[RMDB]
RNA sequence: GGGAACGACUCGAGUAGAGUCGAAAAAGUUGUGGUGGUUUUCUUUUUGGCACAUUUGUUAAGUUUUCAAAUGGGCCUAACUCUGCCACAUAUAUAAUAUCGGAGAUGGCAAAGGCUUGUGACGGAGGGUUUGCAGAUAGUUCGCUAUCUGCAAACCAAAAGAAACAACAACAACAAC
Reactivity to 2A3 in 0.01 (KOAc 150mM, MgCl2 10mM, bicine 150mM(pH8.5), 24C), signal-to-noise 2, nucleotides 027 to 126: a000g010u000u020g000u000g000g000u020g010g050u070u000u060u160c060u040u210u020u030u020g020g040c030a000c030a010u000u000u030g010u000u160a250a300g050u170u040u060u130c010a010a000a010u000g000g000g020c020c000u000a010a010c000u000c000u010g000c000c000a000c000a000u000a020u000a000u000a000a180u140a060u050c100g030g020a110g010a060u030g060g060c090a140a180a010g130g000c040u070u000g000u020g040a060c040g010g020a030g080
Structure probing data (2A3) for a 177-nucleotide construct.